[RMDB]
RNA sequence: GGGAACGACUCGAGUAGAGUCGAAAAGGACCCCACUCCUGCGAGACAGGAGUAAUCCUAAACAGGGUUUUCACCCUUCCUUUAGUUUCCUUCCUCUCCUGGAGAGGUCUUCUGCCCUAGCCCGGUCGUUACCUUUACAGUUCGCUGUAAAGGUAACAAAAGAAACAACAACAACAAC
Reactivity to 2A3 in 0.01 (KOAc 150mM, MgCl2 10mM, bicine 150mM(pH8.5), 24C), signal-to-noise 3, nucleotides 027 to 126: g020g010a010c020c000c030c030a060c000u000c000c000u040g030c150g060a040g020a060c190a130g020g000a000g000u010a000a030u030c020c000u040a050a030a060c300a170g060g000g000u100u050u220u290c130a050c020c000c000u010u000c010c000u000u030u000a020g000u010u040u020c010c000u030u050c010c000u010c010u010c020c020u030g000g020a010g000a010g010g000u020c000u050u000c030u050g030c010c010c020u010a060g040c010c020c030g060g110u130c070
Reactivity to DMS in 0.01 (KOAc 150mM, MgCl2 10mM, bicine 150mM(pH8.5), 24C), signal-to-noise 3, nucleotides 027 to 126: g000g000a060c030c020c040c220a100c000u000c000c000u010g000c140g010a050g020a090c170a020g010g010a020g010u000a020a010u010c190c020u000a010a040a020c220a010g010g000g000u000u010u030u000c250a090c020c000c000u000u020c020c030u000u000u000a020g000u000u000u000c020c010u000u010c040c030u000c010u000c010c040u010g000g000a030g000a080g000g020u000c010u010u000c040u000g010c020c010c020u010a130g000c020c010c030g000g010u010c170